[RMDB]
An RNA of 177 nucleotides, treated with DMS and read out base by base. DMS adducts were read by reverse transcription with MarathonRT. It was measured as part of the RMDB library TTRINS. The RNA was probed in 150 mM KOAc, 10 mM MgCl2 and 150 mM bicine (pH 8.5) at 24 C.
RNA sequence: GGGAACGACUCGAGUAGAGUCGAAAAGAUAUGGAAUUUCGUGUGCUCCUCUCCCACUUACCAACAGCAAAAGGCUCGGAAACGAGCCUUUUGACAUGGUAUGCCGACACACGAGAAUUCCUAAGUCCUGUAUGAAAUUGUUCGCAAUUUCAUACAGAAAAGAAACAACAACAACAAC
Reactivity to DMS in 0.01 (KOAc 150mM, MgCl2 10mM, bicine 150mM(pH8.5), 24C), signal-to-noise 3, nucleotides 027 to 126: g020a130u000a220u010g000g000a010a030u000u000u000c000g020u010g010u000g020c190u000c040c130u000c150u010c010c020c010a300c030u010u000a010c010c000a040a080c230a300g020c010a000a000a000a000g010g010c010u000c000g010g000a090a070a160c010g000a010g000c000c000u000u000u000u000g010a020c090a230u010g000g020u010a010u000g000c100c110g020a120c000a010c000a010c000g000a040g020a070a030u010u000c000c000u000a090a100g000u000c060